[RMDB]
RNA sequence: GGGAACGACUCGAGUAGAGUCGAAAAGACGAUUCAAGAGUUUAUGGCAAUGUCUCUUACCGUUGCCCCUGGGAUGUCUGUGCUUGGUUGUCCGAAAUCUACCCAACUCGGAUUCAGUCGAUGAAUGGACCAGAGGGAGAUUCGUCUCCCUCUGGUCAAAAGAAACAACAACAACAAC
Reactivity to DMS in 0.01 (KOAc 150mM, MgCl2 10mM, bicine 150mM(pH8.5), 24C), signal-to-noise 2, nucleotides 027 to 126: g000a020c000g020a100u000u010c040a020a120g020a070g000u010u010u010a060u030g000g000c070a060a030u010g010u000c110u010c090u000u000a060c140c060g010u000u000g010c030c010c040c090u010g010g020g000a060u000g020u000c020u030g000u000g010c060u000u000g000g020u000u000g010u000c010c060g010a030a050a090u000c120u010a160c020c020c010a100a120c050u000c020g010g000a020u000u000c110a080g020u010c090g000a120u000g010a060a110u010g000
Background: Source: RMDB library OK2TRN, as collected in RNAgym. Chemical mapping of a 177-nucleotide RNA with DMS. The reactions ran in a buffer of 150 mM KOAc, 10 mM MgCl2 and 150 mM bicine (pH 8.5), at 24 C. Reactivities are rounded to 0.1 and cut off at 0 and 3.